[RMDB]
RNA sequence: GGGAACGACUCGAGUAGAGUCGAAAACAAUUCUCUCUGGAACCACAACUAAUGUUGACAAAAUACGCCAGCUUCUCAAAGGUGUCACCCUUGACAAGUUGCGUGAUUAUUUAGCUGACUAUGACGUACACUAAGCUGUUCGCAGCUUAGAAAAGAAACAACAACAACAAC
Reactivity to DMS in 0.01 (KOAc 150mM, MgCl2 10mM, bicine 150mM(pH8.5), 24C), signal-to-noise 8, nucleotides 027 to 129: c180a080a170u000u010c030u000c030u000c070u000g000g000a080a050c040c050a110c030a100a070c120u000a090a080u010g020u040u000g030a100c090a120a040a000a040u000a010c020g020c030c020a040g020c020u000u000c190u000c030a000a000a050g000g030u040g000u050c170a060c020c010c030u020u000g020a060c130a000a020g020u010u010g010c110g010u040g010a090u030u010a040u010u020u010a060g000c060u000g020a040c000u000a080u040g000a060c040g030u060a090c140a140
Reactivity to 2A3 in 0.01 (KOAc 150mM, MgCl2 10mM, bicine 150mM(pH8.5), 24C), signal-to-noise 8, nucleotides 027 to 129: c050a050a110u080u010c030u000c000u000c040u060g070g040a040a030c040c020a050c040a100a050c040u180a110a120u180g030u040u070g050a050c040a020a070a000a010u100a030c000g010c040c020a000g010c010u020u000c020u010c000a070a110a030g050g010u060g090u100c090a070c030c000c000u000u000g000a010c000a020a010g020u030u010g040c070g010u020g030a030u010u090a060u050u070u050a040g010c040u030g040a030c030u060a060u220g060a020c090g050u080a010c060a010